Structure probing data (DMS and 2A3) for a 177-nucleotide construct.
Reactivities are given for positions 27 through 126.
[RMDB]
RNA sequence: GGGAACGACUCGAGUAGAGUCGAAAAUCGUUUUCUUCUUUACCGAACCGAAAUAGCAACUCUUCACCUGUGGGCCAGAUCCAACGUAAUUCCGAUGCUGACGCGAGAAAGCGAGCACCAUCACCGAGGACUAUGUAGAAUUCGUUCUACAUAGUCCAAAAGAAACAACAACAACAAC
Reactivity to DMS in 0.01 (KOAc 150mM, MgCl2 10mM, bicine 150mM(pH8.5), 24C), signal-to-noise 6, nucleotides 027 to 126: u000c100g020u000u000u000u010c010u000u000c040u010u010u000a080c060c020g010a070a090c040c030g020a070a080a090u000a090g020c070a070a070c060u000c040u010u000c060a070c020c030u000g020u010g010g010g000c020c050a060g000a080u010c050c040a050a080c100g010u010a070a120u000u000c030c040g010a080u000g000c050u000g000a100c080g010c050g010a090g010a040a090a070g010c020g010a060g010c050a050c030c020a060u000c080a100c070c070g010a180
Reactivity to 2A3 in 0.01 (KOAc 150mM, MgCl2 10mM, bicine 150mM(pH8.5), 24C), signal-to-noise 5, nucleotides 027 to 126: u060c020g010u030u010u010u020c010u070u010c010u040u060u040a070c030c020g040a040a020c020c000g050a050a080a090u140a060g040c030a010a050c010u030c020u100u060c030a040c050c010u040g010u070g070g020g000c020c000a020g010a060u010c030c010a040a020c050g040u050a040a080u100u030c030c030g020a020u060g010c010u040g030a020c010g020c020g030a060g130a070a050a000g010c020g000a020g030c020a020c020c010a030u070c020a010c090c020g110a050
The reactions ran in a buffer of 150 mM KOAc, 10 mM MgCl2 and 150 mM bicine (pH 8.5), at 24 C. In probing experiments dimethyl sulfate is read out at A N1 and C N3, which are open when not base-paired. The 2A3 profile rests on 8,904 reads.